RNA sequence: GGGAACGACUCGAGUAGAGUCGAAAAGUGGGCUGCCUUUGCCCUGGUCAUUGAUAGUGCAGGGAGAGGAAUCAAUGAAAGCGCUUCCCCGUGUUUGAAGGGUCCACUCCUAUCCCUUCCAAACUCUUCACGGAUGCAGAUUCGUCUGCAUCCGUGAAAAAGAAACAACAACAACAAC
Reactivity to 2A3 in 0.01 (KOAc 150mM, MgCl2 10mM, bicine 150mM(pH8.5), 24C), signal-to-noise 3, nucleotides 027 to 126: g000u030g000g000g000c020u060g080c040c000u030u030u300g180c000c000c000u030g010g100u110c050a090u070u090g160a170u230a130g060u090g020c000a010g000g000g070a050g000a000g010g090a030a020u130c070a030a110u140g060a120a000a000g050c020g020c050u090u100c020c000c000c020g080u050g060u080u060u040g030a020a020g010g000g010u040c020c050a030c020u020c000c020u130a190u120c010c000c000u030u020c100c050a000a020a050c000u030c060u110